[RMDB]
RNA sequence: GGGAACGACUCGAGUAGAGUCGAAAAGAUAUGGACCACGAGGCUUUUGACGAGCUGGCAUUCGGAAACGAAUGCAGCUCGAUAAGCCUGUGGUCCUAAGUCAAAGACCUGGGUUCGCCCAGGUCAAGGUACUUAAAAGGUUCGCCUUUUAAGUACCAAAAGAAACAACAACAACAAC
Reactivity to DMS in 0.01 (KOAc 150mM, MgCl2 10mM, bicine 150mM(pH8.5), 24C), signal-to-noise 5, nucleotides 027 to 126: g000a020u000a180u000g000g000a020c000c000a010c000g020a040g030g010c010u000u000u010u010g020a250c130g010a010g010c000u000g010g020c010a010u000u000c000g010g000a040a040a080c000g010a020a000u000g010c000a000g000c000u000c000g010a030u010a010a040g010c000c000u000g020u000g000g010u000c000c000u000a010a070g000u000c020a120a150a190g000a010c000c000u010g000g000g010u000u010c300g020c010c000c010a010g010g000u000c010a010a030
Reactivity to 2A3 in 0.01 (KOAc 150mM, MgCl2 10mM, bicine 150mM(pH8.5), 24C), signal-to-noise 5, nucleotides 027 to 126: g010a010u030a010u070g000g010a010c010c020a010c140g300a040g010g030c060u180u190u300u300g300a300c150g010a010g020c010u070g210g220c020a010u000u010c000g030g010a010a020a020c010g000a010a000u010g000c000a000g010c010u000c000g000a000u020a010a000g000c000c000u000g000u000g000g000u000c000c000u000a000a000g010u000c010a020a060a130g000a000c010c000u010g000g000g050u030u130c240g170c020c010c000a000g000g000u000c000a000a000